[RMDB]
The record gives the reactivity of an RNA of 177 nucleotides to 2A3 and DMS.
RNA sequence: GGGAACGACUCGAGUAGAGUCGAAAAACAAAUCUGUGCUGGAGGAGAUGGAAACCGACGUGAAGUCCCUCAUUCAGAGAGCCCUUCGGCAGCUGGAGGAGUGUGUGGGCACUAUCCCUCCUGCUCCGCUAUUCCCCUCUUUCGAGAGGGGAAUAGCAAAAGAAACAACAACAACAAC
Reactivity to 2A3 in 0.01 (KOAc 150mM, MgCl2 10mM, bicine 150mM(pH8.5), 24C), signal-to-noise 2, nucleotides 027 to 126: a030c030a000a070a080u050c050u110g040u040g060c030u040g060g010a030g060g040a300g000a080u020g010g050a300a300a080c050c050g050a080c050g110u200g170a060a010g020u060c010c020c000u010c010a030u030u030c010a010g020a000g040a040g070c010c020c000u150u170c060g000g020c020a020g000c000u020g000g030a000g000g000a020g010u060g010u070g040u150g020g070g000c020a010c000u000a040u060c000c000c000u000c000c000u000g000c000u030c030c030
Reactivity to DMS in 0.01 (KOAc 150mM, MgCl2 10mM, bicine 150mM(pH8.5), 24C), signal-to-noise 2, nucleotides 027 to 126: a090c060a090a130a060u010c120u000g000u000g000c050u000g020g000a060g040g000a190g030a070u010g000g020a070a120a120c030c040g040a070c070g040u000g060a190a180g000u000c030c050c040u000c020a070u010u000c040a020g000a130g010a080g020c040c000c150u000u000c150g010g050c070a020g000c000u000g000g020a070g000g020a040g020u000g020u000g010u010g000g000g000c130a180c040u010a060u010c070c000c000u000c020c010u000g000c010u010c060c140

The data come from the RNA Mapping Database (RMDB), library OK2TRN.
DMS adducts were read by reverse transcription with MarathonRT.
The DMS profile rests on 990 reads.